[RMDB]
RNA sequence: GGGAACGACUCGAGUAGAGUCGAAAACAAGAUAAGCUAAUUCACUAAACACAUUUUUGGAUUCGGUAUUGUUACUCGCAGAAUAGAGUUCGCUAUAAUCCUGAUAUUCGGAAAUCUGUGGAGUUUCAGGUUUUGGUGGAGGUGUAACAGCUACUUGUCAUAGCAACAACUUCGGUUGUUGCUAUGAAAAAGAAACAACAACAACAAC
Reactivity to DMS in 0.01 (KOAc 150mM, MgCl2 10mM, bicine 150mM(pH8.5), 24C), signal-to-noise 2, nucleotides 027 to 156: c020a080a130g020a100u000a090a080g010c030u000a080a080u010u000c060a090c030u000a080a130a100c030a110c060a150u000u000u020u000u010g010g010a060u010u020c030g030g020u000a060u010u000g020u010u000a030c020u000c050g000c080a200g010a090a190u000a070g010a140g000u010u000c070g030c070u000a120u010a060a030u010c020c020u000g010a070u000a090u000u000c010g020g000a060a060a030u000c050u000g060u000g000g000a120g030u000u010u020c100a090g000g030u010u000u000u000g000g010u000g010g010a090g030g030u000g010u000a040a090c070a100g000c000u000a070c010u000u000g010
Reactivity to 2A3 in 0.01 (KOAc 150mM, MgCl2 10mM, bicine 150mM(pH8.5), 24C), signal-to-noise 5, nucleotides 027 to 156: c020a000a010g050a170u190a100a030g000c010u040a040a120u120u070c020a020c030u080a060a300a030c050a010c040a070u140u130u080u110u160g090g020a060u110u060c080g030g000u090a050u090u090g050u030u030a030c020u010c030g010c100a070g060a230a070u190a110g020a020g020u100u100c040g000c070u060a050u040a230a070u040c010c000u040g050a040u040a070u210u130c050g060g090a050a080a060u020c050u060g040u050g110g110a090g060u050u080u050c030a020g000g090u020u030u130u130g050g010u020g020g040a080g000g030u040g000u030a050a050c040a040g020c020u030a030c000u030u030g020
Background: This 207-nucleotide RNA was probed chemically with DMS and 2A3. It was measured as part of the RMDB library OK3TST. Values cover nucleotides 27 to 156. DMS adducts were read by reverse transcription with MarathonRT. For 2A3 the reverse transcriptase was SuperScript II with manganese. The RNA was probed in 150 mM KOAc, 10 mM MgCl2 and 150 mM bicine (pH 8.5) at 24 C.